[RMDB]
RNA sequence: GGGAACGACUCGAGUAGAGUCGAAAAUUUGUGACAAUGAGGAUCGCCGGUGUAUGCCGACACGUCAUGGUGUAGGGGAGAUCAAGAAGGUGUGGUCGGCCUCUCGUUUUUGGCAAAAACUUGCGUGCUAUAUUAUAAAAUUCGUUUUAUAAUAUAGAAAAGAAACAACAACAACAAC
Reactivity to DMS in 0.01 (KOAc 150mM, MgCl2 10mM, bicine 150mM(pH8.5), 24C), signal-to-noise 3, nucleotides 027 to 126: u010u020u020g010u010g010a160c060a070a070u030g030a120g020g000a050u010c040g000c030c020g020g010u000g000u000a070u000g010c020c000g000a040c020a010c000g010u000c050a010u010g000g000u000g000u000a010g000g000g000g000a040g000a010u000c040a060a090g020a080a090g000g020u020g030u000g010g010u000c030g010g000c020c020u000c030u000c030g010u000u010u010u010u010g000g020c020a030a050a070a140a060c040u010u000g020c030g020u010g010
Reactivity to 2A3 in 0.01 (KOAc 150mM, MgCl2 10mM, bicine 150mM(pH8.5), 24C), signal-to-noise 1, nucleotides 027 to 126: u050u020u120g040u030g030a030c030a040a020u110g010a050g010g060a060u070c010g000c000c000g000g030u020g000u010a010u030g010c000c010g000a020c000a000c020g040u030c000a030u030g030g000u030g020u030a020g010g000g000g010a010g000a000u060c000a020a030g090a010a040g040g030u070g020u050g000g060u010c020g020g100c000c010u000c000u000c000g040u000u020u010u040u140g060g020c000a000a020a000a000a010c020u050u080g030c030g000u020g000
Chemical mapping of a 177-nucleotide RNA with DMS and 2A3. The data come from the RNA Mapping Database (RMDB), library OK1LIB. 2A3 is a SHAPE reagent: it acylates the 2'-hydroxyl of flexible nucleotides of all four kinds. For DMS the reverse transcriptase was MarathonRT. Reactivities are given for positions 27 through 126. For DMS, 5,840 sequencing reads were counted.